[RMDB]
RNA sequence: GGGAACGACUCGAGUAGAGUCGAAAAUCAGCACUGGAAUAUGGCGCUCAACCAGACCUUCGGCGAUCUCCGCCAGAUGCGCUUGUUGUUCAAGCGUAAAACUGUUUGUGUGAUACGCCGUAAAGUAAGUCCCACUAAUCUUCGGAUUAGUGGGACUAAAAGAAACAACAACAACAAC
Reactivity to DMS in 0.01 (KOAc 150mM, MgCl2 10mM, bicine 150mM(pH8.5), 24C), signal-to-noise 1, nucleotides 027 to 126: u030c060a080g020c070a020c070u010g010g000a100a140u000a010u000g030g000c050g070c030u000c130a050a180c020c060a060g000a060c040c020u000u000c000g020g020c010g010a130u000c050u000c030c000g040c250c000a030g000a060u000g010c010g000c010u000u000g020u000u020g020u010u010c000a000a000g000c020g010u000a040a060a200a110c020u020g000u000u000u000g020u000g000u000g000a040u000a100c020g000c000c000g010u010a030a040a070g000u000a080
Reactivity to 2A3 in 0.01 (KOAc 150mM, MgCl2 10mM, bicine 150mM(pH8.5), 24C), signal-to-noise 1, nucleotides 027 to 126: u060c010a010g030c060a030c030u010g070g090a140a090u110a110u170g030g000c050g030c010u010c070a040a080c030c010a000g130a100c010c010u050u010c030g010g000c010g010a040u020c020u040c060c000g000c030c010a010g010a040u060g000c040g000c020u010u010g050u050u100g080u160u180c020a020a020g000c000g030u060a050a040a000a090c030u010g070u190u130u040g120u090g000u040g030a000u060a150c010g020c000c000g000u020a000a070a000g010u040a060
Chemical mapping of a 177-nucleotide RNA with DMS and 2A3. Source: RMDB library OK2TST, as collected in RNAgym. For 2A3 the reverse transcriptase was SuperScript II with manganese. Values cover nucleotides 27 to 126. DMS adducts were read by reverse transcription with MarathonRT.